Source: RMDB library POS240, as collected in RNAgym. Structure probing data (2A3 and DMS) for a 307-nucleotide construct. The reactions ran in a buffer of 150 mM KOAc, 10 mM MgCl2 and 150 mM bicine (pH 8.5), at 24 C. DMS adducts were read by reverse transcription with MarathonRT.
[RMDB]
RNA sequence: GGGAACGACUCGAGUAGAGUCGAAAAGAACAACGCGUGAGCGUUGUUCAACCUUCACUUCGGUGAAGGAACCAAUUGCUACGGCAAUUGGAACUGGACACUUCGGUGUCCAGAAGAACCUACGUGAGUAGGUUCAAAGUUCAUAUGCCCACCUUUGCUGCUCCGGGUGGAUGCUUCGUGCAAAUGCUAUGAAUGCCUACGUAUAUGUGCGUAGAUGCCUAUAUUUUCUCUCCUGAGAAAAUAUAGAUGCCUCCAAAGGAGAUGCUACGGUACAAUUCGUUGUACCGAAAAGAAACAACAACAACAAC
Reactivity to 2A3 in 0.01 (KOAc 150mM, MgCl2 10mM, bicine 150mM(pH8.5), 24C), signal-to-noise 7, nucleotides 027 to 266: g000a000a000c000a000a000c000g020c020g040u100g090a090g000c000g000u010u000g000u000u000c000a000a000c000c000u000u000c000a000c000u030u100c280g120g000u000g000a000a000g000g000a010a000c000c000a000a000u000u000g000c010u020a050c270g120g000c000a000a000u000u000g000g010a010a030c010u000g000g000a000c000a000c010u020u090c250g110g000u000g000u000c000c000a000g000a010a030g000a000a000c000c000u000a000c010g100u110g080a070g010u010a000g010g000u000u000c000a000a000a000g010u030u030c010a010u060a030u290g030c000c000c000a020c000c020u050u080u220g040c030u040g020c010u000c010c000g030g010g040u030g020g020a030u110g020c010u090u210c170g130u120g050c030a100a130a200u220g000c010u040a020u080g050a060a020u090g050c000c010u020a010c020g050u040a080u030a070u300g230u100g090c010g010u020a010g030a100u150g000c000c000u010a000u000a000u000u010u010u000c010u000c040u070c060c170u100g000a000g000a000a010a010a000u000a000u000a000g010a020u080g090c020c040u110c040c020a140a070a080g010g010a030g020a030u050g000c010u050a020
Reactivity to DMS in 0.01 (KOAc 150mM, MgCl2 10mM, bicine 150mM(pH8.5), 24C), signal-to-noise 4, nucleotides 027 to 266: g010a010a010c000a010a000c000g010c020g010u030g000a190g020c010g010u000u010g000u000u010c000a100a150c000c000u000u000c000a000c000u000u030c160g020g010u000g000a000a000g000g000a050a120c010c000a010a020u010u000g000c010u000a090c180g020g020c010a000a000u000u000g000g000a130a190c000u000g000g010a010c000a010c000u000u020c170g020g020u010g010u000c000c000a000g000a180a140g000a010a010c000c000u000a010c000g000u010g010a130g010u000a010g010g000u000u000c000a060a090a120g000u000u000c020a040u000a030u030g010c010c020c000a030c040c010u000u010u010g000c020u000g000c010u000c010c040g000g010g010u000g000g000a120u000g010c010u000u030c160g020u030g030c030a080a150a120u010g020c010u010a090u010g000a030a030u000g010c180c010u000a000c010g020u000a100u020a090u030g020u000g010c010g000u000a010g000a100u000g000c040c000u000a000u000a000u000u000u000u000c000u000c000u020c220c260u010g010a010g000a030a000a010a000u000a010u000a000g000a100u000g010c080c210u000c060c100a080a110a040g000g000a030g010a060u000g000c020u000a110